[RMDB]
RNA sequence: GGGAACGACUCGAGUAGAGUCGAAAACGUCGUGAACUAGCGACAAUGCAUUAGGUCCAUCGUUAUCUAACCGAAACAUCGUGACUAGUUCUAGAAUAGAACCAUGAGAGGGCGCUGGCAAACAAAGACGGGGUGUAUUAUUCGUAGUACGCCCCGUAAAAGAAACAACAACAACAAC
Reactivity to 2A3 in 0.01 (KOAc 150mM, MgCl2 10mM, bicine 150mM(pH8.5), 24C), signal-to-noise 7, nucleotides 027 to 126: c040g010u010c010g010u010g040a050a020c020u010a040g010c010g050a020c010a020a030u050g000c020a030u020u090a040g010g010u010c030c010a080u050c070g060u040u060a080u080c040u040a020a050c020c010g040a050a030a010c040a040u040c030g050u040g090a090c030u030a020g010u000u000c000u010a030g070a080a050u130a040g010a020a010c010c010a040u050g020a010g010a020g030g020g000c000g000c010u000g000g000c000a030a050a030c020a040a120a000g120
Reactivity to DMS in 0.01 (KOAc 150mM, MgCl2 10mM, bicine 150mM(pH8.5), 24C), signal-to-noise 9, nucleotides 027 to 126: c140g000u010c030g010u010g000a050a040c030u000a040g000c130g010a050c060a060a030u010g000c060a060u020u010a120g000g000u000c080c090a100u020c120g010u020u020a070u020c100u020a110a060c050c030g000a170a130a100c050a040u010c050g010u000g000a110c030u000a020g010u000u000c000u000a110g010a070a070u030a070g010a080a100c020c040a080u020g010a100g010a080g000g000g000c030g020c010u000g000g000c060a070a050a070c150a060a080a090g000
Chemical mapping of a 177-nucleotide RNA with 2A3 and DMS. For DMS the reverse transcriptase was MarathonRT. It was measured as part of the RMDB library OK1LIB. The RNA was probed in 150 mM KOAc, 10 mM MgCl2 and 150 mM bicine (pH 8.5) at 24 C. The DMS profile rests on 52,660 reads. For 2A3, 16,541 sequencing reads were counted.